[RMDB]
RNA sequence: GGGAACGACUCGAGUAGAGUCGAAAAGUUCGGCGAAACGCCGUCUGCCUGGGUCCGAAAGAUUUCUUGUCGCAAAUCUACAAGACAUUGGUUAACGUGUGCUCCACUUUAAGGGCCGCUCGCCGGGUCAAGGUAUGGUCUUCGGGCCGUGCCUUGAAAAAGAAACAACAACAACAAC
Reactivity to 2A3 in 0.01 (KOAc 150mM, MgCl2 10mM, bicine 150mM(pH8.5), 24C), signal-to-noise 9, nucleotides 027 to 126: g040u030u040c000g000g000c010g020a090a040a030c080g000c000c000g010u010c010u020g030c000c010u010g040g000g010u000c000c010g050a050a030a000g020a000u000u010u010c010u020u070g070u040c040g020c080a020a020a060u030c010u010a010c020a030a000g010a000c010a020u010u050g020g010u040u080a040a010c030g010u020g010u040g020c020u020c020c010a040c010u020u040u080a040a040g030g010g000c000c000g000c010u000c010g000c000c000g010g000g000
Reactivity to DMS in 0.01 (KOAc 150mM, MgCl2 10mM, bicine 150mM(pH8.5), 24C), signal-to-noise 9, nucleotides 027 to 126: g010u020u010c010g010g010c020g010a040a090a300c300g000c020c010g010u010c040u010g010c030c010u000g020g000g010u010c010c010g000a120a110a050g000a030u000u000u000c030u010u020g000u010c140g000c200a040a050a060u020c020u010a040c120a120a070g000a020c040a060u010u010g000g010u010u020a050a060c090g000u010g000u020g000c080u010c020c030a060c080u010u020u020a080a090g000g000g010c010c010g000c210u010c020g010c010c010g000g000g010
Structure probing data (2A3 and DMS) for a 177-nucleotide construct. The data come from the RNA Mapping Database (RMDB), library OK1LIB. The 2A3 profile rests on 89,404 reads. Reactivities are rounded to 0.1 and cut off at 0 and 3.